Structure probing data (DMS and 2A3) for a 177-nucleotide construct. The DMS profile rests on 1,792 reads. Conditions: 150 mM KOAc, 10 mM MgCl2 and 150 mM bicine (pH 8.5), 24 C.
[RMDB]
RNA sequence: GGGAACGACUCGAGUAGAGUCGAAAAACUUCUGACGCUCACUGUGGCACCAUAGUGGCAGCAUAAAUUAUGCGAAUCGAUGGCAUCUUAUCAACAUUUGUCAGUGCUGCACACUGGCGCUCGACUAACCACGUAUGGUGUUCGCACCAUACGUGGUAAAAGAAACAACAACAACAAC
Reactivity to DMS in 0.01 (KOAc 150mM, MgCl2 10mM, bicine 150mM(pH8.5), 24C), signal-to-noise 2, nucleotides 027 to 126: a110c210u000u000c000u000g040a130c010g030c030u030c000a070c130u000g000u000g050g020c030a080c070c050a050u010a010g100u000g000g000c050a030g000c010a000u010a100a110a090u030u030a010u020g000c080g010a150a100u030c150g000a140u020g000g000c000a100u000c000u000u000a200u020c190a040a090c200a030u010u000u000g020u020c030a060g000u000g010c000u000g010c170a120c000a040c030u010g040g000c050g020c050u090c110g000a050c110u020a080
Reactivity to 2A3 in 0.01 (KOAc 150mM, MgCl2 10mM, bicine 150mM(pH8.5), 24C), signal-to-noise 7, nucleotides 027 to 126: a000c050u100u060c030u070g050a050c040g000c030u060c020a050c030u040g040u080g070g000c020a020c030c010a060u040a130g040u050g050g020c030a000g000c010a020u090a140a210a060u300u200a080u180g100c080g110a080a050u120c080g050a040u060g030g000c020a020u010c030u090u170a130u170c070a080a120c030a220u030u020u090g050u030c030a040g010u000g000c010u040g000c050a050c010a000c140u020g020g000c030g010c010u020c010g080a080c060u080a050